An RNA of 207 nucleotides, treated with 2A3 and DMS and read out base by base. DMS adducts were read by reverse transcription with MarathonRT. Conditions: 150 mM KOAc, 10 mM MgCl2 and 150 mM bicine (pH 8.5), 24 C. It was measured as part of the RMDB library OK3TST.
RNA sequence: GGGAACGACUCGAGUAGAGUCGAAAAGAAAUUGUUAAGGCAGAAUGAAAGGGAGAAAAGCACGUCCUGAGCACCAAGAAGAAGAUAACUCGAAGUUAAGAAGACGUGAUGGUACUUUGGAGAAGAAAGCAACACCUGAGUCAAAUUGCACUGAGCACUGCUGAGGUAUAUUCGUAUACCUCAGCAGAAAAGAAACAACAACAACAAC
Reactivity to 2A3 in 0.01 (KOAc 150mM, MgCl2 10mM, bicine 150mM(pH8.5), 24C), signal-to-noise 2, nucleotides 027 to 156: g010a000a020a000u160u110g020u090u100a040a040g010g000c020a020g030a120a030u120g040a140a080a020g030g020g000a060g030a060a070a010a020g020c020a010c070g040u040c020c060u020g000a000g010c010a010c020c040a020a010g030a050a030g040a050a010g040a230u070a100a070c010u030c060g020a100a000g030u010u050a100a050g040a070a010g040a030c030g000u050g020a050u050g000g000u060a060c040u060u080u050g020g010a050g000a070a000g010a030a150a000g040c010a000a010c000a030c010c010u030g010a000g040u060c030a040a070a090u130u080g020c030a010c020u050g030a020g030c000a000
Reactivity to DMS in 0.01 (KOAc 150mM, MgCl2 10mM, bicine 150mM(pH8.5), 24C), signal-to-noise 1, nucleotides 027 to 156: g020a050a100a100u040u000g000u040u070a190a110g030g010c100a080g000a090a040u010g010a110a110a060g040g000g020a300g000a080a050a050a050g010c010a070c000g010u000c060c000u000g020a030g000c070a090c080c020a030a100g030a020a120g000a050a040g020a010u010a030a060c040u000c060g040a040a120g000u000u000a060a100g000a040a090g050a030c020g000u000g010a070u010g000g030u000a040c000u000u000u000g010g040a160g000a090a100g000a070a090a090g000c000a010a020c070a060c040c010u010g040a070g030u000c010a000a080a030u000u000g010c050a060c090u000g030a120g040c070a130